[RMDB]
RNA sequence: GGGAACGACUCGAGUAGAGUCGAAAACAAACGACGAUACGUUCGCACUGGCAGCCUAACGGCCGCCGUCCUCUGCCUAGUUCACUGACGGGCUAGUGUCGCAAGACCGGUAGCAAUACCGACAGAGGUCAUAUACGUCAGUUAAGCCUUGGCGGCGCCGAAACAAAAUGUUCGCAUUUUGUUUCGGAAAAGAAACAACAACAACAAC
Reactivity to DMS in 0.01 (KOAc 150mM, MgCl2 10mM, bicine 150mM(pH8.5), 24C), signal-to-noise 1, nucleotides 027 to 156: c050a130a070a100c070g010a110c010g030a110u000a180c120g050u010u000c050g010c080a040c050u030g050g000c020a060g000c000c020u080a150a190c170g090g020c000c070g030c000c010g000u000c010c010u010c000u030g020c050c010u000a040g010u000u000c030a040c030u000g000a000c000g010g010g000c030u000a000g000u010g010u000c050g060c200a160a200g000a080c010c010g000g000u000a010g030c240a070a210u000a000c010c000g010a020c000a010g040a070g000g000u000c100a180u000a070u000a030c000g000u000c020a060g000u000u020a050a100g010c050c050u000u010g020g000c090g040g010c030g010
Reactivity to 2A3 in 0.01 (KOAc 150mM, MgCl2 10mM, bicine 150mM(pH8.5), 24C), signal-to-noise 4, nucleotides 027 to 156: c050a000a100a030c070g080a010c010g060a070u130a120c180g100u100u030c030g000c050a060c100u180g000g000c010a000g000c020c010u110a160a070c100g010g010c000c000g000c000c020g000u000c000c000u010c010u020g010c000c000u000a000g000u020u020c070a020c030u030g010a000c030g000g000g020c000u000a000g020u010g010u020c010g020c040a120a000g010a010c020c000g010g000u000a000g010c030a080a130u010a010c010c000g010a010c000a000g020a010g020g010u000c010a050u150a010u060a100c000g000u000c000a000g000u030u120a080a020g010c010c020u090u180g150g060c070g040g000c010g030
An RNA of 207 nucleotides, treated with DMS and 2A3 and read out base by base. Source: RMDB library ARCHII, as collected in RNAgym. 2A3 adducts were read by reverse transcription with SuperScript II with manganese. The RNA was probed in 150 mM KOAc, 10 mM MgCl2 and 150 mM bicine (pH 8.5) at 24 C.